[RMDB]
RNA sequence: GGGAACGACUCGAGUAGAGUCGAAAAUGAGCUGUUUCCGUUGGCUCGACAAAUUGUCAAAGAUGCUGGAUAUAACUAUGCAAAAAGUAGAAAACGACCAUGUGAUCCAGCUGAUUUGCAUAGUCCGAAAUAGUACGCACUUCGGUGCGUACUAUUUAAAAGAAACAACAACAACAAC
Reactivity to DMS in 0.01 (KOAc 150mM, MgCl2 10mM, bicine 150mM(pH8.5), 24C), signal-to-noise 3, nucleotides 027 to 126: u010g000a050g030c020u020g000u040u000u000c010c040g000u010u010g020g020c020u010c040g010a080c080a020a120a060u060u000g010u020c000a010a050a010g000a230u000g010c000u010g000g000a010u010a110u000a090a060c040u030a010u000g030c090a050a080a130a170a100g000u000a100g010a020a030a030a100c170g010a160c300c070a050u000g030u000g000a080u010c000c000a010g000c010u010g000a150u000u000u000g000c030a040u010a060g000u000c010c190g000
Reactivity to 2A3 in 0.01 (KOAc 150mM, MgCl2 10mM, bicine 150mM(pH8.5), 24C), signal-to-noise 3, nucleotides 027 to 126: u110g000a020g010c030u050g000u080u080u060c070c040g080u170u250g020g020c090u030c020g020a000c000a000a260a060u110u070g080u190c060a010a060a020g000a000u090g040c000u000g000g000a000u020a010u000a160a030c030u000a000u110g020c150a070a000a090a190a030g080u150a050g070a090a130a140a100c070g020a050c060c070a060u180g020u030g010a000u000c000c000a000g000c000u000g030a020u000u000u000g000c000a030u000a030g040u020c020c000g000